[RMDB]
Description:
This 207-nucleotide RNA was probed chemically with DMS and 2A3. For DMS the reverse transcriptase was MarathonRT. 2A3 adducts were read by reverse transcription with SuperScript II with manganese. Conditions: 150 mM KOAc, 10 mM MgCl2 and 150 mM bicine (pH 8.5), 24 C.
RNA sequence: GGGAACGACUCGAGUAGAGUCGAAAAAUUGACUGCGCUCCGUUCUACGGCGUUUGGUCCGAGCAGAGUGAGAUUAUUGUGCAAUCUCGAGACUCGGCGCUGGCGGCCGAAAUAGGCUACACCGUGUACCUGAAGAGAGCGUUUGUCAUGCUAACCGACCAUCCCUAAAAUUCGUUUUAGGGAUGGUAAAAGAAACAACAACAACAAC
Reactivity to DMS in 0.01 (KOAc 150mM, MgCl2 10mM, bicine 150mM(pH8.5), 24C), signal-to-noise 3, nucleotides 027 to 156: a120u000u010g010a060c010u000g010c000g030c000u000c010c020g040u000u000c030u000a140c040g010g000c020g010u000u000u000g050g020u010c020c010g000a080g030c000a080g030a110g030u000g000a050g010a040u010u000a160u000u020g020u010g030c200a050a040u000c010u000c000g000a300g000a010c000u010c000g010g020c090g020c080u000g030g020c010g010g000c010c000g010a020a080a140u000a080g000g010c050u000a060c030a060c000c070g010u000g010u000a040c300c040u010g010a130a070g000a050g010a040g010c030g010u000u000u000g020u000c030a050u000g020c080u000a070a170c040c000g010
Reactivity to 2A3 in 0.01 (KOAc 150mM, MgCl2 10mM, bicine 150mM(pH8.5), 24C), signal-to-noise 9, nucleotides 027 to 156: a000u030u010g000a000c000u000g000c000g020c000u000c000c020g160u080u030c040u100a040c010g000g010c030g030u050u080u300g030g000u010c000c000g000a000g010c060a030g070a100g150u250g030a010g040a030u020u060a130u260u300g170u160g150c060a010a000u010c000u000c010g090a110g040a120c010u000c000g010g010c080g000c030u000g040g020c010g040g050c010c010g050a120a080a120u150a050g010g000c030u060a060c030a030c080c080g070u060g040u190a080c030c050u070g050a080a010g120a010g000a010g030c010g000u100u080u090g000u000c000a000u010g000c030u060a060a050c010c010g000